[RMDB]
RNA sequence: GGGAACGACUCGAGUAGAGUCGAAAACACCUUAUGGUUCUCCUCCUGCUCUUCUCACUUGUGUCCUGUACAACACCUGGCCCCUAGGAGGUACACGGCGGUGUUCAUGGAAGGAGCAAAUGAGUUGAGCCUCCCCAUACUUCGGUAUGGGGAGGCUAAAAGAAACAACAACAACAAC
Reactivity to 2A3 in 0.01 (KOAc 150mM, MgCl2 10mM, bicine 150mM(pH8.5), 24C), signal-to-noise 1, nucleotides 027 to 126: c010a030c000c070u200u300a300u200g020g000u060u000c000u000c000c030u000c000c050u000g000c000u000c000u000u020c000u000c000a090c020u050u080g050u110g250u090c020c000u010g010u230a080c010a000a000c000a090c000c000u030g140g040c000c000c000c000u010a120g000g180a140g160g000u020a030c120a000c020g040g000c000g010g000u000g000u000u140c050a150u180g120g000a100a050g060g000a000g010c000a000a000a000u060g000a080g040u000u000g000